This 207-nucleotide RNA was probed chemically with 2A3 and DMS.
The data come from the RNA Mapping Database (RMDB), library OK3TST.
The 2A3 profile rests on 2,959 reads.
DMS adducts were read by reverse transcription with MarathonRT.
The reactions ran in a buffer of 150 mM KOAc, 10 mM MgCl2 and 150 mM bicine (pH 8.5), at 24 C.

[RMDB]
RNA sequence: GGGAACGACUCGAGUAGAGUCGAAAAGAACUCACAGCAACUUCAUGAUAAAGGGACUCACUGUUCCCAUUUUCAGUUGAAGAAACUCAGGCAUAGAGAAAUAGCCCAAGGUCAUAGAACUAAGAGCAAGAAUUUGAGUCCAGCCAGUCCGUGCUCACUAAAUGGAUAUGUUCGCAUAUCCAUUUAGAAAAGAAACAACAACAACAAC
Reactivity to 2A3 in 0.01 (KOAc 150mM, MgCl2 10mM, bicine 150mM(pH8.5), 24C), signal-to-noise 5, nucleotides 027 to 156: g020a080a010c000u010c010a060c030a070g050c040a060a070c000u030u030c010a050u050g030a040u110a090a080a050g040g010g010a020c020u040c100a110c130u190g060u150u030c010c000c020a050u040u010u020u010c010a020g030u040u050g050a040a010g020a100a040a000c050u060c100a010g000g040c030a040u100a090g040a010g030a060a120a070u070a020g000c000c020c030a020a040g020g000u030c010a070u090a180g070a170a060c060u100a160a030g020a010g050c040a060a030g050a080a070u090u120u150g020a030g020u000c020c020a020g030c020c010a010g030u030c010c030g080u050g020c010u020c020a020
Reactivity to DMS in 0.01 (KOAc 150mM, MgCl2 10mM, bicine 150mM(pH8.5), 24C), signal-to-noise 3, nucleotides 027 to 156: g010a070a090c040u000c020a080c080a070g030c040a030a230c010u010u020c030a070u000g000a100u010a040a130a140g000g000g020a060c010u010c180a160c200u000g000u000u000c000c000c010a280u000u000u000u000c020a040g040u000u000g010a050a080g020a140a110a050c030u010c030a030g030g020c050a100u000a080g010a110g010a060a060a120u010a130g000c020c000c000a040a130g010g020u000c040a120u000a110g010a070a060c050u000a050a180g000a060g000c020a070a090g000a050a110u000u000u000g010a070g010u000c020c040a050g020c030c040a120g010u010c020c030g000u000g030c010u000c030a220